The data come from the RNA Mapping Database (RMDB), library TTRDES.
Chemical mapping of a 177-nucleotide RNA with 2A3 and DMS.
[RMDB]
RNA sequence: GGGAACGACUCGAGUAGAGUCGAAAAGAUAUGGACACCUCACAGACAUGCCAACGUGAGGGUCGGAAACGACCCUCUGGCAACAGCUGUAGGUGUCCUAAGUCAAACCCUUGCUUCGGCAAGGGAACUGACGUGAAAGGUUCGCCUUUCACGUCAGAAAAGAAACAACAACAACAAC
Reactivity to 2A3 in 0.01 (KOAc 150mM, MgCl2 10mM, bicine 150mM(pH8.5), 24C), signal-to-noise 2, nucleotides 027 to 126: g000a030u060a050u140g020g000a000c020a020c030c000u050c070a060c010a000g060a020c050a210u200g010c010c030a160a070c300g150u140g020a000g000g020g010u010c010g000g000a040a060a020c000g020a010c030c000c010u000c050u000g020g000c000a130a100c080a150g060c000u010g000u000a020g000g000u000g020u010c000c000u000a000a000g010u000c000a070a050a260c020c010c000u000u030g010c030u080u030c300g240g000c000a020a000g000g000g030a010a050
Reactivity to DMS in 0.01 (KOAc 150mM, MgCl2 10mM, bicine 150mM(pH8.5), 24C), signal-to-noise 2, nucleotides 027 to 126: g030a050u000a290u040g000g010a020c000a000c000c000u000c300a020c000a020g000a090c100a280u000g000c000c010a050a160c300g000u010g000a000g000g000g000u000c010g020g000a050a110a190c000g020a030c000c010c000u000c000u000g010g020c010a000a090c290a130g020c000u000g030u010a020g000g000u000g000u010c010c000u000a000a090g000u000c040a100a200a190c000c000c000u000u000g010c000u020u000c220g000g000c000a030a000g000g000g040a070a020